Description:
This 177-nucleotide RNA was probed chemically with 2A3 and DMS. The reactions ran in a buffer of 150 mM KOAc, 10 mM MgCl2 and 150 mM bicine (pH 8.5), at 24 C. For 2A3, 14,526 sequencing reads were counted. It was measured as part of the RMDB library M2PK50. The DMS profile rests on 12,784 reads. For 2A3 the reverse transcriptase was SuperScript II with manganese.

RNA sequence: GGGAACGACUCGAGUAGAGUCGAAAAACCUGAUGAUUCGUCAUCAGGUCACAUGCCGCCCGAACGGCUUCCUGACCCGGCGGAUUCACUUUAAAUGGAGCACUGCUGCAUCAUUCGUGAUGCAGAAUUAGUAACGGAUAUUCGUAUCCGUUACUAAAAAAGAAACAACAACAACAAC
Reactivity to 2A3 in 0.01 (KOAc 150mM, MgCl2 10mM, bicine 150mM(pH8.5), 24C), signal-to-noise 7, nucleotides 027 to 126: a000c000c000u000g000a000u000g000a000u010u090c180g050u000c080a000u000c000a010g000g010u010c000a060c010a050u110g010c010c030g020c030c050c010g040a110a040c040g020g000c000u070u040c000c000u020g050a080c010c010c010g020g000c030g040g030a040u120u130c060a060c080u110u140u220a080a150a100u180g060g000a030g020c030a020c150u130g000c010u000g000c020a000u010c000a010u020u110c190g090u030g010a000u000g000c000a000g000a000a030
Reactivity to DMS in 0.01 (KOAc 150mM, MgCl2 10mM, bicine 150mM(pH8.5), 24C), signal-to-noise 8, nucleotides 027 to 126: a020c000c000u000g010a010u000g010a020u000u010c180g020u000c000a010u000c000a000g000g010u000c070a050c150a090u000g010c010c020g010c050c070c110g000a080a170c060g000g000c020u000u000c020c010u000g000a130c060c040c060g000g010c070g000g000a100u000u000c060a050c080u010u000u000a040a100a110u000g000g000a060g010c070a090c150u010g000c010u000g000c010a010u000c000a030u000u010c160g020u000g020a010u000g000c000a000g000a040a070
For DMS the reverse transcriptase was MarathonRT.